[RMDB]
Chemical mapping of a 177-nucleotide RNA with 2A3.
The 2A3 profile rests on 505 reads.

RNA sequence: GGGAACGACUCGAGUAGAGUCGAAAAUUACCCCUUUCUAGUCUGGCUCCUGGGACUCUAGAGGGAGUCAGUCUGAAAUAUUAAGUAGUGAACUCGUCUGUCCAGUGUCAGUGUUCAUUGGCAACUUACGGUCAUCAUGUUUCGACAUGAUGACCGUAAAAGAAACAACAACAACAAC
Reactivity to 2A3 in 0.01 (KOAc 150mM, MgCl2 10mM, bicine 150mM(pH8.5), 24C), signal-to-noise 1, nucleotides 027 to 126: u140u110a140c000c000c000c000u000u000u070c040u020a030g000u000c000u000g000g030c020u000c020c020u050g050g080g080a090c140u050c030u060a140g070a140g070g020g000a010g000u000c000a000g000u000c000u000g040a000a000a000u300a110u190u170a300a020g020u060a000g000u000g040a000a000c060u000c060g060u000c160u070g100u110c000c160a140g000u150g000u220c000a010g030u000g140u140u020c000a000u000u030g020g060c010a010a000c030u000u000